About this RNA: This 177-nucleotide RNA was probed chemically with 2A3 and DMS.

RNA sequence: GGGAACGACUCGAGUAGAGUCGAAAAGUUUUCUUAACAGAUCAUCUGUGACAUCGAAUGACAAAUUACCGACAAAUAGAAUCCUUGACGGUGGAUUUUUGGACAUGGCAACUAAAUCGUCCUUGUCGACGCGUACCUAUUUCGAUAGGUACGCGUCAAAAGAAACAACAACAACAAC
Reactivity to 2A3 in 0.01 (KOAc 150mM, MgCl2 10mM, bicine 150mM(pH8.5), 24C), signal-to-noise 3, nucleotides 027 to 126: g030u010u030u060u000c010u100u090a050a010c020a040g030a130u150c070a100u030c050u030g050u030g050a010c020a100u080c110g070a200a130u110g030a070c040a060a150a100u150u060a050c000c020g000a000c080a020a040a020u160a060g140a060a000u050c020c020u010u070g030a020c020g000g010u010g040g060a040u010u040u070u100u070g030g010a010c020a050u040g010g030c050a060a080c120u170a050a000a150u080c050g000u000c010c000u000u070g030u040c050
Reactivity to DMS in 0.01 (KOAc 150mM, MgCl2 10mM, bicine 150mM(pH8.5), 24C), signal-to-noise 2, nucleotides 027 to 126: g010u010u040u000u010c000u010u000a140a050c040a020g000a120u070c150a090u000c000u000g010u000g030a120c040a050u050c060g020a050a040u020g010a130c100a070a110a040u000u030a060c000c000g000a070c080a040a070a130u010a150g020a060a070u000c040c030u020u010g000a110c100g050g010u000g020g000a030u000u020u000u020u030g000g000a050c030a060u020g000g020c090a040a030c090u020a030a130a140u020c020g000u000c000c030u000u030g000u020c040

Annotation
For DMS the reverse transcriptase was MarathonRT.